This 177-nucleotide RNA was probed chemically with DMS and 2A3. Values are in units of 0.01, from 0 to 300, in steps of 10. For 2A3, 46,002 sequencing reads were counted. It was measured as part of the RMDB library OK2TRN. For DMS, 85,766 sequencing reads were counted.
RNA sequence: GGGAACGACUCGAGUAGAGUCGAAAAGAGACACAGACUCUCUGUCACUCUGAGAGUGUCAGUGUGAGUGUCUGUGAGUCACAGUCUCAGAGUGUCUGAGAGACUGUCACAGAGUGAGUCAGUGUGAUCAUAACCUGUAUUUCGAUACAGGUUAUGAAAAAGAAACAACAACAACAAC
Reactivity to DMS in 0.01 (KOAc 150mM, MgCl2 10mM, bicine 150mM(pH8.5), 24C), signal-to-noise 9, nucleotides 027 to 126: g010a150g010a090c080a040c010a040g010a100c000u000c000u000c010u000g010u000c000a010c000u000c000u000g010a050g010a070g010u000g010u000c090a070g010u010g010u000g010a080g020u000g010u000c050u000g010u010g000a120g010u010c140a100c020a050g000u000c000u000c000a030g000a120g010u000g010u000c030u000g000a070g000a030g010a050c010u000g000u000c040a040c040a050g010a080g010u000g000a070g010u000c030a070g020u000g010u000g000a170
Reactivity to 2A3 in 0.01 (KOAc 150mM, MgCl2 10mM, bicine 150mM(pH8.5), 24C), signal-to-noise 9, nucleotides 027 to 126: g060a000g010a000c010a000c010a040g030a070c000u000c000u000c030u050g040u020c000a000c000u010c020u040g030a040g010a020g090u110g090u060c060a050g030u030g050u070g160a110g050u140g080u020c050u070g100u070g040a030g050u050c020a000c000a030g110u010c000u000c000a010g010a010g040u100g040u040c050u080g020a020g000a000g000a040c010u010g000u010c000a010c010a030g110a020g070u120g030a020g040u040c030a030g030u030g030u040g090a060